Chemical mapping of a 177-nucleotide RNA with 2A3 and DMS. It was measured as part of the RMDB library OK2TST. The RNA was probed in 150 mM KOAc, 10 mM MgCl2 and 150 mM bicine (pH 8.5) at 24 C.

RNA sequence: GGGAACGACUCGAGUAGAGUCGAAAACAAUCUUGGCCGGGGCGAUACGAUGAAACGUUUGGCUCGCUUUGUAGAACUUUAUCCGGUUUUACAGCAGCAGGCGCAAACCGAUGGCAAACGGAUUAGCAUUAAGGCUUGCAUUCGUGCAAGCCUUAAUAAAAGAAACAACAACAACAAC
Reactivity to 2A3 in 0.01 (KOAc 150mM, MgCl2 10mM, bicine 150mM(pH8.5), 24C), signal-to-noise 1, nucleotides 027 to 126: c000a020a060u060c020u180u170g050g000c000c000g000g010g020g070c070g020a020u080a140c030g050a060u160g070a070a100a020c020g020u020u060u020g130g000c040u040c040g000c000u020u020u130g030u030a020g000a020a030c000u060u070u070a130u100c020c040g020g010u000u000u000u000a010c010a030g000c000a000g000c000a000g040g000c070g000c190a030a000a100c010c020g080a130u070g020g000c000a080a060a020c060g050g010a090u000u010a080g020c030
Reactivity to DMS in 0.01 (KOAc 150mM, MgCl2 10mM, bicine 150mM(pH8.5), 24C), signal-to-noise 2, nucleotides 027 to 126: c120a090a070u010c080u020u020g010g040c000c020g030g010g000g030c030g010a070u010a040c040g020a060u010g000a060a040a090c050g010u000u000u010g010g040c000u010c110g020c000u010u000u000g020u010a010g010a000a010c030u000u010u010a110u040c290c230g000g000u000u000u000u030a010c010a030g020c100a030g010c020a070g000g000c000g020c060a040a080a030c020c030g030a100u000g030g000c050a030a070a110c100g010g000a080u010u010a070g010c210
For DMS, 1,640 sequencing reads were counted. The 2A3 profile rests on 1,020 reads.